[RMDB]
RNA sequence: GGGAACGACUCGAGUAGAGUCGAAAAGAGGCGAAAUAAUUCCCAUCUCCUGUGUACGGCCGGAGAUGGGUAUGGCCGUACUAAUAAGCCUCAUAGUGACGAGAGUCACGAAUUCUGGAUAGCCUGUGGUAGUCGGCUAUCCUUUGACUACCGUAGAACGUGAUAUGACGUUCGCGUCAUAUCACGUAAAAGAAACAACAACAACAAC
Reactivity to DMS in 0.01 (KOAc 150mM, MgCl2 10mM, bicine 150mM(pH8.5), 24C), signal-to-noise 2, nucleotides 027 to 156: g020a020g030g030c020g050a100a120a070u010a170a140u020u010c020c000c000a050u020c030u000c010c010u000g020u030g020u000a080c090g010g010c060c090g020g030a020g030a020u000g030g020g000u000a020u000g050g020c010c040g000u000a230c040u000a080a200u010a110a300g000c010c000u000c010a170u000a170g010u000g020a060c000g030a300g000a300g000u000c000a020c000g000a060a130u000u000c070u020g000g040a130u010a070g020c030c020u000g030u000g060g000u020a070g040u000c170g000g000c030u000a100u000c040c010u000u000u000g010a050c020u000a000c010c000g030u000a110g020a060
Reactivity to 2A3 in 0.01 (KOAc 150mM, MgCl2 10mM, bicine 150mM(pH8.5), 24C), signal-to-noise 2, nucleotides 027 to 156: g010a010g010g020c050g100a130a100a050u230a020a080u120u050c000c000c000a000u010c000u000c000c010u040g000u020g030u080a040c020g040g010c020c050g010g010a020g000a020u020g010g000g000u000a000u030g050g000c010c010g010u020a020c010u010a010a180u060a120a000g000c000c000u000c020a040u070a020g010u010g000a000c020g020a010g000a000g100u010c000a000c000g010a020a030u210u010c040u070g020g000a000u000a010g010c020c040u080g040u090g090g070u050a080g120u070c050g000g000c010u000a000u020c000c000u030u040u060g000a010c010u030a030c040c010g020u040a070g030a150